[RMDB]
RNA sequence: GGGAACGACUCGAGUAGAGUCGAAAAUUCGUGGAAUUGACCGGAGACUUAGGUUCUUCGCAACUGACAAAGUCAUAUGCCUCUGAGGACCAGAUGAGUCACGACCGGAGGAUUGGUGACAAUAAAAGACAGCUUGAAGAUUCGUCUUCAAGCUGUCAAAAGAAACAACAACAACAAC
Reactivity to 2A3 in 0.01 (KOAc 150mM, MgCl2 10mM, bicine 150mM(pH8.5), 24C), signal-to-noise 4, nucleotides 027 to 126: u090u040c080g020u120g060g080a110a090u120u040g060a130c070c010g000g010a000g000a020c020u110u190a080g110g060u260u030c000u010u030c010g000c070a110a060c060u060g080a050c040a110a150a040g040u020c010a000u050a050u290g140c010c000u000c060u030g010a070g050g000a000c030c020a110g050a300u170g030a130g020u020c050a100c260g080a050c000c000g040g000a020g020g030a030u100u120g110g000u000g000a000c010a090a070u150a090a080a050a000
Reactivity to DMS in 0.01 (KOAc 150mM, MgCl2 10mM, bicine 150mM(pH8.5), 24C), signal-to-noise 3, nucleotides 027 to 126: u000u000c040g050u020g020g010a050a060u010u000g020a140c260c030g000g000a100g010a050c050u000u000a120g000g010u030u000c040u000u010c050g020c090a040a130c100u000g000a100c140a080a110a160g000u010c000a020u000a100u030g030c010c060u020c050u000g000a040g000g000a040c000c020a220g020a070u020g000a210g010u010c000a060c090g000a290c130c010g030g000a110g010g010a060u000u000g000g000u010g010a020c010a160a040u050a070a110a170a030
This 177-nucleotide RNA was probed chemically with 2A3 and DMS. The RNA was probed in 150 mM KOAc, 10 mM MgCl2 and 150 mM bicine (pH 8.5) at 24 C. Reactivities are given for positions 27 through 126. For 2A3 the reverse transcriptase was SuperScript II with manganese.